[RMDB]
RNA sequence: GGGAACGACUCGAGUAGAGUCGAAAAGAGAGGCAGGGGGUACCGGGCCUGAACCCCAGACCAGCGGGGCAUUCUGGUGGCCCAGGGAGAGAGGCCAUGUCCUCUUUAGACCUGCCACCUUGGGAUUAGGGACCAAAAGUGGCUUUCUCAGGCUGGAUAUAGUAUAUCGUUUCGACGAUAUACUAUAAAAAGAAACAACAACAACAAC
Reactivity to 2A3 in 0.01 (KOAc 150mM, MgCl2 10mM, bicine 150mM(pH8.5), 24C), signal-to-noise 1, nucleotides 027 to 156: g050a000g010a030g030g030c060a050g000g030g040g020g010u020a050c000c010g010g030g020c010c000u040g010a090a080c000c040c000c020a010g050a050c020c020a020g050c040g050g000g010g000c030a050u060u040c030u100g110g010u090g040g000c040c060c020a020g030g010g010a070g010a000g000a000g030g010c010c030a070u090g030u060c010c000u010c000u030u010u010a070g030a030c000c010u020g040c000c000a020c000c000u010u050g020g000g000a030u080u140a040g020g050g000a020c020c000a040a040a030a030g050u040g000g000c000u020u150u020c070u050c050a040g110g040c010u020g020g030a030
Reactivity to DMS in 0.01 (KOAc 150mM, MgCl2 10mM, bicine 150mM(pH8.5), 24C), signal-to-noise 1, nucleotides 027 to 156: g000a120g000a100g040g000c030a080g000g000g050g010g000u000a030c060c000g000g050g000c000c020u000g030a050a130c080c020c020c020a200g010a190c110c070a120g040c090g000g000g010g070c050a150u020u000c100u010g020g060u000g040g060c000c000c090a050g020g050g010a150g000a060g020a010g010g010c010c110a100u020g000u000c020c000u000c010u000u000u000a110g020a170c020c010u010g020c010c000a020c030c010u000u010g010g040g030a220u020u010a110g020g000g030a150c030c030a040a020a090a110g010u000g040g020c070u000u020u030c040u010c030a100g010g000c040u000g020g000a300